[RMDB]
RNA sequence: GGGAACGACUCGAGUAGAGUCGAAAAAUCCGAAACGUACGUCUACAGUGUCAACAUCGUACUAACGGAAGAUACUUAGCCGGAUAGGCAUGCGAAAGGAUGGUUAGGAGCAGGUCGUGGUCUCCAAUUGCAUGCGAAAGGAUGGUCUCGUGGCGUCUCACAUUAACCCGUUCGCGGGUUAAUGUGAAAAAGAAACAACAACAACAAC
Reactivity to DMS in 0.01 (KOAc 150mM, MgCl2 10mM, bicine 150mM(pH8.5), 24C), signal-to-noise 1, nucleotides 027 to 156: a170u000c020c000g000a000a070a120c140g010u020a020c010g030u000c000u010a120c090a160g000u010g010u000c070a100a160c070a060u020c010g010u000a060c080u010a110a130c070g000g000a160a140g000a100u000a030c060u000u030a110g010c030c030g000g000a140u000a070g020g000c030a020u010g000c010g020a070a070a230g020g000a050u010g030g010u010u000a160g040g020a100g040c040a190g030g010u000c020g000u000g010g000u010c040u000c010c010a020a200u010u020g010c010a050u010g000c000g010a120a100a060g040g000a080u000g000g010u010c030u000c030g020u000g010g000c050g000u000c010
Reactivity to 2A3 in 0.01 (KOAc 150mM, MgCl2 10mM, bicine 150mM(pH8.5), 24C), signal-to-noise 3, nucleotides 027 to 156: a000u000c010c010g020a080a080a010c050g030u070a000c010g030u010c040u080a070c100a170g050u050g100u160c060a100a020c030a160u090c030g030u030a050c040u060a070a030c020g020g010a050a020g020a080u120a080c070u110u080a060g030c000c030g080g020a120u130a080g050g000c000a010u030g020c000g060a150a000a010g080g010a050u150g010g090u140u110a080g000g050a070g040c090a050g050g090u110c060g150u120g030g030u050c010u000c040c000a010a020u020u030g000c020a010u030g000c010g080a040a030a000g070g020a020u060g040g020u030c020u010c080g020u020g030g000c000g040u020c020